[RMDB]
RNA sequence: GGGAACGACUCGAGUAGAGUCGAAAAGGCGGCAGUCCUCAGUACUCUUACUCUUUCCUAUAAAGAGGAGACUGCUGGACUCGCCGCCCGAGCCCGAGCAUGGGCCCCAGUUCCGAACGAAGAGACCCGCCUGAGCAGUUCGCUGCUCAGAAAAGAAACAACAACAACAAC
Reactivity to 2A3 in 0.01 (KOAc 150mM, MgCl2 10mM, bicine 150mM(pH8.5), 24C), signal-to-noise 9, nucleotides 027 to 129: g000g000c010g000g000c010a000g010u010c000c000u000c000a010g000u180a300c030u010c020u080u170a270c000u020c000u040u100u040c060c080u160a170u270a250a020a000g010a000g010g000a000g010a000c000u010g050c070u000g000g000a000c000u020c070g000c000c000g000c000c000c000g000a010g010c000c000c000g000a060g010c080a110u160g000g000g000c000c000c000c010a020g000u120u010c010c020g010a050a040c010g010a020a040g020a010g010a050c000c010c010g040c010
Reactivity to DMS in 0.01 (KOAc 150mM, MgCl2 10mM, bicine 150mM(pH8.5), 24C), signal-to-noise 7, nucleotides 027 to 129: g010g010c020g010g070c040a050g030u020c010c020u000c010a030g010u030a220c040u020c040u050u010a300c020u000c020u030u040u040c230c170u030a120u080a080a030a030g020a030g040g000a030g000a000c000u000g020c200u020g020g020a030c010u000c120g030c000c000g000c010c010c010g000a050g030c040c010c010g000a110g020c170a070u040g000g000g000c000c000c000c000a100g000u000u000c030c030g000a030a080c050g020a040a000g020a020g020a000c010c020c040g020c210

Chemical mapping of a 170-nucleotide RNA with 2A3 and DMS. For DMS the reverse transcriptase was MarathonRT. 2A3 adducts were read by reverse transcription with SuperScript II with manganese. The DMS profile rests on 35,829 reads. Conditions: 150 mM KOAc, 10 mM MgCl2 and 150 mM bicine (pH 8.5), 24 C. For 2A3, 46,739 sequencing reads were counted.